[RMDB]
RNA sequence: GGGAACGACUCGAGUAGAGUCGAAAAGCAUCCGACAUGGUGCUGGGAUGCGAAUAUCAGCACAUUACUCCUCGAGAACGCAUGGGAGGAGGAUCAUCCAUGCAAUGGCUUUUGCCUAUCGUACCAUAGAGUCGUCGGUACGUAAGAUGACGACUGAAGUAUUAUAGUAUUUCGAUACUAUAAUACUAAAAGAAACAACAACAACAAC
Reactivity to 2A3 in 0.01 (KOAc 150mM, MgCl2 10mM, bicine 150mM(pH8.5), 24C), signal-to-noise 9, nucleotides 027 to 156: g060c020a050u050c040c040g070a080c090a100u140g060g010u030g010c020u040g010g020g020a060u080g040c070g030a040a020u110a040u130c040a020g030c010a010c000a030u040u150a070c020u010c010c000u010c010g040a050g030a110a020c070g020c030a020u020g020g040g020a050g020g030a030g020g010a030u070c010a010u000c020c010a000u020g010c000a030a150u080g020g000c040u090u130u200u300g010c000c000u070a080u070c020g010u020a030c000c010a040u040a100g090a000g040u010c010g000u010c020g020g040u070a060c040g030u050a040a050g030a080u130g000a000c010g000a010c000u020g030a050
Reactivity to DMS in 0.01 (KOAc 150mM, MgCl2 10mM, bicine 150mM(pH8.5), 24C), signal-to-noise 6, nucleotides 027 to 156: g010c030a110u000c030c000g010a090c060a300u000g010g010u010g020c000u000g020g030g010a100u000g020c090g010a150a100u000a100u000c040a070g020c030a070c030a140u000u010a100c020u000c050c000u000c010g010a170g010a070a120c090g040c060a060u010g000g010g000a060g020g000a080g010g000a100u010c070a130u000c020c000a050u000g020c040a110a140u000g010g010c020u000u000u000u000g030c010c040u010a100u000c040g030u000a070c020c010a130u000a110g010a100g010u000c020g020u000c030g010g040u000a050c120g010u000a050a060g020a150u000g000a040c010g000a080c010u000g010a110

This 207-nucleotide RNA was probed chemically with 2A3 and DMS. Source: RMDB library OK3TST, as collected in RNAgym. For DMS the reverse transcriptase was MarathonRT. 2A3 adducts were read by reverse transcription with SuperScript II with manganese.